[RMDB]
RNA sequence: GGGAACGACUCGAGUAGAGUCGAAAAUUGCUAUGAGUAAGGGUGACGAUGCUUUCUAAGUCACCUGCAACACCGAAGUACGUCGGAUUGAUGACGAGGACCGCUUUAGUAUCCGGGUGAAGACUGAGUGUCAGCGCAAAUUCGUUUGCGCUGACACAAAAGAAACAACAACAACAAC
Reactivity to DMS in 0.01 (KOAc 150mM, MgCl2 10mM, bicine 150mM(pH8.5), 24C), signal-to-noise 1, nucleotides 027 to 126: u010u000g010c100u010a090u010g050a050g020u000a080a180g000g000g000u000g000a110c000g000a290u030g050c130u000u000u000c140u030a230a230g000u000c000a030c000c000u000g000c090a060a080c070a110c000c010g000a040a110g000u000a010c230g010u000c020g060g000a250u020u010g000a120u000g000a030c000g010a140g000g000a110c170c060g020c160u010u000u000a030g050u020a130u020c140c070g010g000g010u000g000a070a080g010a100c080u020g000a250
Annotation
Structure probing data (DMS) for a 177-nucleotide construct. Conditions: 150 mM KOAc, 10 mM MgCl2 and 150 mM bicine (pH 8.5), 24 C. Source: RMDB library OK2TST, as collected in RNAgym. DMS adducts were read by reverse transcription with MarathonRT.